[RMDB]
RNA sequence: GGGAACGACUCGAGUAGAGUCGAAAAGAUAUGGACAUAGGUGCUUUUGACGUCGACAUCGGAAACGAUUUCGACGAUAAGCACCGUGUCCUAAGUCGAGACACCGUUCACUUCGGUGAACGGUGAACGAAAGGCAAUCGUUCGCGAUUGCCUUUCGAAAAGAAACAACAACAACAAC
Reactivity to DMS in 0.01 (KOAc 150mM, MgCl2 10mM, bicine 150mM(pH8.5), 24C), signal-to-noise 1, nucleotides 027 to 126: g000a030u000a210u000g010g000a000c000a010u000a050g050g010u010g010c000u000u060u010u000g010a270c070g000u000c000g000a010c050a010u000c000g020g010a030a030a080c000g010a040u000u000u000c010g000a030c000g000a060u000a000a030g030c000a000c020c000g000u000g020u000c000c000u000a000a080g000u000c010g000a230g020a300c000a020c000c000g000u010u000c000a010c010u000u000c220g030g010u000g000a000a000c000g020g020u000g020a000a070
Reactivity to 2A3 in 0.01 (KOAc 150mM, MgCl2 10mM, bicine 150mM(pH8.5), 24C), signal-to-noise 1, nucleotides 027 to 126: g010a000u020a060u110g010g010a010c000a000u140a300g000g020u040g000c000u170u270u300u300g260a050c000g000u010c000g010a000c010a020u000c010g000g000a000a000a010c020g000a010u000u020u000c000g000a010c000g010a020u070a030a040g000c010a010c000c000g000u000g000u000c010c010u000a060a000g030u000c010g030a030g060a040c010a010c000c000g000u010u020c000a000c020u040u080c300g150g000u020g000a000a000c000g050g000u000g010a040a000